Structure probing data (DMS) for a 207-nucleotide construct. For DMS, 2,761 sequencing reads were counted. DMS adducts were read by reverse transcription with MarathonRT.
RNA sequence: GGGAACGACUCGAGUAGAGUCGAAAAGGGCGCUAUUCGUAGCGCCCAAAAAAGCGUACUACCGAGAGGCUGUACACCGAUAAGUCCCAAAUAGGACUUUUGACGGUGACAGCUACCCACCUCGGUAUCGCAAAAAACCCAGUGUUCGCACUGGGAAACAGGUUUAAGUAUUCGUACUUAAACCUGUAAAAGAAACAACAACAACAAC
Reactivity to DMS in 0.01 (KOAc 150mM, MgCl2 10mM, bicine 150mM(pH8.5), 24C), signal-to-noise 1, nucleotides 027 to 156: g010g040g020c000g040c010u010a030u010u000c170g020u000a020g000c030g040c020c010c000a000a000a000a040a020a050g020c050g010u000a130c160u000a000c000c000g000a040g000a190g020g010c010u000g000u000a250c020a010c010c000g000a200u010a010a000g040u000c000c000c010a050a140a150u010a030g040g020a020c010u010u000u000u000g020a090c000g030g050u000g000a110c000a010g000c000u010a000c000c000c030a300c150c000u000c000g020g020u000a010u000c000g000c000a010a070a060a030a080a080c000c000c010a000g030u010g000u000u000c300g040c030a010c030u000g010g000g010a000a060